[RMDB]
RNA sequence: GGGAACGACUCGAGUAGAGUCGAAAACUUAUGAAGAGGUCAGACUUCAGUAUAGCCAAGCAGUUCACACCGAGGGAAGUUGGAGGUGCAGCACCGACCUCAGUGGAGUACCUUCCGGGACCUGAUACGAUCAGUAGUACUUCGGUACUACUGAUCGAAAAGAAACAACAACAACAAC
Reactivity to DMS in 0.01 (KOAc 150mM, MgCl2 10mM, bicine 150mM(pH8.5), 24C), signal-to-noise 3, nucleotides 027 to 126: c040u000u000a080u010g010a070a100g000a060g000g000u020c080a090g000a140c030u010u000c040a040g010u000a060u010a080g010c040c050a070a090g020c070a070g000u000u010c090a090c080a100c050c030g020a100g010g000g000a070a080g010u000u000g000g000a060g030g010u000g000c060a070g010c000a020c020c020g020a100c090c050u000c030a100g000u000g010g010a100g020u000a050c040c030u000u000c020c020g000g010g000a090c040c020u000g010a100u000a150
Reactivity to 2A3 in 0.01 (KOAc 150mM, MgCl2 10mM, bicine 150mM(pH8.5), 24C), signal-to-noise 2, nucleotides 027 to 126: c030u090u070a070u210g080a000a090g050a020g050g040u080c040a040g040a110c020u060u040c050a050g020u080a050u110a150g040c010c000a040a020g000c030a030g030u130u080c040a040c020a020c060c080g020a050g080g000g010a020a130g050u080u090g040g040a030g010g030u050g050c020a010g020c020a020c010c020g040a040c010c000u020c000a000g030u030g040g100a040g030u030a040c030c000u030u040c070c010g000g000g060a050c000c000u040g030a050u050a120